[RMDB]
RNA sequence: GGGAACGACUCGAGUAGAGUCGAAAAACUACUGUGUCUGUAUCUAUGCCUGGCACAUAAAAGAAACUCAGUAAGUGUUUUAUGGAAGAACUGUGAAUUGAGAUCCAACUUUUAUAUACUGUUAAGGUCCAAAUUUUUGGGGGGCAAUGGAAUGGCAGAUUGCGAGUACAUUCGUGUACUCGCAAUCAAAAGAAACAACAACAACAAC
Reactivity to 2A3 in 0.01 (KOAc 150mM, MgCl2 10mM, bicine 150mM(pH8.5), 24C), signal-to-noise 2, nucleotides 027 to 156: a010c060u080a020c030u060g000u000g000u000c030u020g100u100a150u020c070u030a100u080g060c010c060u040g000g000c010a000c000a070u110a000a050a000a000g080a000a100a050c030u060c080a030g010u130a140a050g030u050g050u150u030u040u230a040u130g020g020a000a040g010a120a070c010u030g030u100g140a070a140u120u110g010a030g000a000u000c010c000a040a040c040u070u100u100u130a130u040a020u010a070c030u020g020u100u040a110a000g020g020u000c010c010a020a020a170u080u130u070u080u140g010g000g000g020g000g000c020a000a030u030g020g090a030a090u080g010g000c020a050